[RMDB]
RNA sequence: GGGAACGACUCGAGUAGAGUCGAAAAUGCCUCCCCACCAGGCCUUCCACGUGGAGCCCGAGGAGCACCAGCAGACACUGCAGCGGGUCAGGGAGCUUGAGGUAACCUGGGGCCAGGGUCCCCCUGGGCAAGGAGGGGCCUGGGAAGCCCAGCCCCAAUAUCCAUAAUCAUUCGUGAUUAUGGAUAUAAAAGAAACAACAACAACAAC
Reactivity to DMS in 0.01 (KOAc 150mM, MgCl2 10mM, bicine 150mM(pH8.5), 24C), signal-to-noise 2, nucleotides 027 to 156: u010g010c060c020u000c020c010c020c040a150c020c010a080g020g000c030c010u000u000c010c020a230c160g000u040g010g010a180g020c000c010c040g020a110g030g010a140g050c030a090c050c010a110g030c060a120g020a160c080a150c040u000g020c050a120g000c050g000g000g000u000c030a150g030g000g010a060g020c050u000u000g000a110g010g020u000a070a180c070c060u000g020g010g060g000c010c050a140g030g030g010u010c020c010c010c010c010u010g000g010g040c040a110a070g020g010a110g030g040g030g010c000c020u000g000g010g010a150a090g020c020c010c020a070g010c010c000c010c000a170
Reactivity to 2A3 in 0.01 (KOAc 150mM, MgCl2 10mM, bicine 150mM(pH8.5), 24C), signal-to-noise 3, nucleotides 027 to 156: u090g010c000c010u020c030c010c000c000a030c010c030a010g030g010c010c020u040u030c020c020a130c110g090u160g020g040a030g010c000c010c030g080a090g010g050a020g040c040a040c040c010a010g030c000a010g090a180c050a030c180u050g020c000a040g060c050g030g020g020u060c040a070g000g030g020a060g030c040u080u120g050a030g020g010u040a050a060c030c030u030g000g010g000g000c010c030a160g030g050g020u110c050c040c000c010c010u020g000g020g030c020a050a030g020g010a050g000g030g000g010c000c000u010g010g000g000a020a000g000c000c000c000a000g000c000c000c000c000a000

The record gives the reactivity of an RNA of 207 nucleotides to DMS and 2A3. For 2A3 the reverse transcriptase was SuperScript II with manganese. High 2A3 reactivity points to a flexible backbone, as in loops and unpaired stretches.